Annotation: This 177-nucleotide RNA was probed chemically with 2A3 and DMS. Reactivities are given for positions 27 through 126. For DMS the reverse transcriptase was MarathonRT. 2A3 adducts were read by reverse transcription with SuperScript II with manganese.

RNA sequence: GGGAACGACUCGAGUAGAGUCGAAAACAAGAAAGGCGCCACAGCAGAAGCGUUCACGUGGCAGCGCCUGUCAGAUUCUGGUGAAUCUGCGAAUUCUGCCGUAGAAAAGACACGAAAGACGUGAUAAGGCAUAUUAAUCAUUCGUGAUUAAUAUGCCAAAAGAAACAACAACAACAAC
Reactivity to 2A3 in 0.01 (KOAc 150mM, MgCl2 10mM, bicine 150mM(pH8.5), 24C), signal-to-noise 7, nucleotides 027 to 126: c030a020a040g190a210a120a010g010g000c000g000c050c050a120c050a050g050c040a020g080a160a010g060c070g080u050u050c050a010c050g020u060g010g010c000a000g000c010g000c000c000u010g050u050c000a000g000a010u020u000c030u250g190g030u300g100a010a000u000c010u030g000c020g020a010a020u120u040c020u030g010c010c020g030u060a010g080a030a070a010a010g120a020c030a000c080g120a100a050a020g100a020c010g000u020g020a070u060a100a050
Reactivity to DMS in 0.01 (KOAc 150mM, MgCl2 10mM, bicine 150mM(pH8.5), 24C), signal-to-noise 4, nucleotides 027 to 126: c060a130a160g000a090a070a040g000g010c010g040c040c120a100c130a120g000c100a080g000a080a100g000c070g010u020u000c030a100c040g000u000g010g000c000a130g000c020g000c010c020u010g000u040c020a000g010a050u000u010c000u020g000g020u030g000a030a000u000c010u000g000c020g000a030a030u020u010c020u000g060c000c030g000u040a070g000a100a070a090a060g000a120c110a020c090g010a090a090a110g020a040c010g000u000g000a070u060a060a210